[RMDB]
RNA sequence: GGGAACGACUCGAGUAGAGUCGAAAACAGGGGUGGCUCUCGCCAUCCCACCUGUUCCCAGGUGGAGGGAGAUGUCACAGGCAGGGGAAGCCAGCAGCAGAGAGGGCUCAGCUGUGCAGUCGUGUCCAAUUGUUAAGAUGUUCGCAUCUUAACAAUUAAAAGAAACAACAACAACAAC
Reactivity to 2A3 in 0.01 (KOAc 150mM, MgCl2 10mM, bicine 150mM(pH8.5), 24C), signal-to-noise 7, nucleotides 027 to 126: c060a040g010g030g000g020u010g010g000c010u030c030u060c180g180c040c010a080u060c040c010c000a010c000c000u020g030u070u030c030c020c000a000g020g010u040g010g010a040g010g040g000a050g000a050u160g050u070c030a030c030a080g060g010c050a020g000g030g000g040a040a000g030c010c020a020g010c020a010g020c040a010g090a010g010a080g090g050g000c010u010c020a010g000c010u050g070u100g080c030a010g010u020c020g010u030g110u040c010c000
Reactivity to DMS in 0.01 (KOAc 150mM, MgCl2 10mM, bicine 150mM(pH8.5), 24C), signal-to-noise 9, nucleotides 027 to 126: c200a130g010g010g020g020u000g010g010c010u000c120u010c140g010c010c010a040u000c100c000c000a010c020c020u000g000u000u000c030c040c000a300g000g020u000g010g010a110g000g000g010a050g000a050u010g010u000c040a070c070a090g000g010c090a060g010g000g010g010a090a100g000c050c050a060g000c060a060g010c060a080g000a110g010a130g010g000g010c030u000c050a210g020c020u000g010u010g020c100a040g010u000c010g000u000g000u000c010c030